[RMDB]
RNA sequence: GGGAACGACUCGAGUAGAGUCGAAAAGGCCAUCGGUUCUACCUGUCCAUUUACGAUGGCCGAGGGACAGGAUUAUAUAUCAAUCGCCGAGAGGCGUACAGUUAGAGUAGCGAGGUCGUAUGACCGGACCGCUUAGACCUCGCGAAGGUCCGGUAGACAGUACCAGCAUAUUCGUAUGCUGGUACUGAAAAGAAACAACAACAACAAC
Reactivity to 2A3 in 0.01 (KOAc 150mM, MgCl2 10mM, bicine 150mM(pH8.5), 24C), signal-to-noise 2, nucleotides 027 to 156: g010g000c020c000a010u000c020g130g020u130u040c070u100a130c010c000u010g000u020c050c020a150u070u060u150a050c030g040a050u020g020g000c010c000g010a070g020g000g000a020c070a060g000g040a040u230u000a100u100a040u040a020u170c020a140a040u090c020g010c000c000g030a030g020a070g070g000c010g020u010a000c020a040g090u120u140a070g020a040g060u040a000g010c000g000a010g000g000u030c060g030u140a040u180g090a060c020c000g000g030a030c010c000g010c050u000u010a010g000a030c000c000u040c030g020c000g000a000a000g020g000u000c000c020g010g010u030a050g010a010
Reactivity to DMS in 0.01 (KOAc 150mM, MgCl2 10mM, bicine 150mM(pH8.5), 24C), signal-to-noise 2, nucleotides 027 to 156: g030g020c000c010a030u010c050g020g000u000u000c070u000a060c090c000u010g020u000c010c030a200u010u000u010a060c010g030a060u000g010g030c000c020g010a020g020g030g030a060c000a060g010g000a160u000u000a060u000a110u010a150u000c070a080a160u000c010g000c030c000g040a260g010a260g020g020c010g020u000a070c050a130g030u000u020a190g000a120g020u000a170g020c020g000a200g020g030u000c000g030u000a090u000g010a090c040c040g000g010a080c030c080g010c070u010u000a090g000a010c010c010u000c020g020c020g010a060a070g000g010u000c010c010g040g010u000a100g010a210

Description
Chemical mapping of a 207-nucleotide RNA with 2A3 and DMS. For DMS, 4,090 sequencing reads were counted. 2A3 adducts were read by reverse transcription with SuperScript II with manganese. The data come from the RNA Mapping Database (RMDB), library OK3TST. For 2A3, 1,222 sequencing reads were counted. Reactivities are given for positions 27 through 156. High DMS reactivity at an A or C suggests that its Watson-Crick edge is free.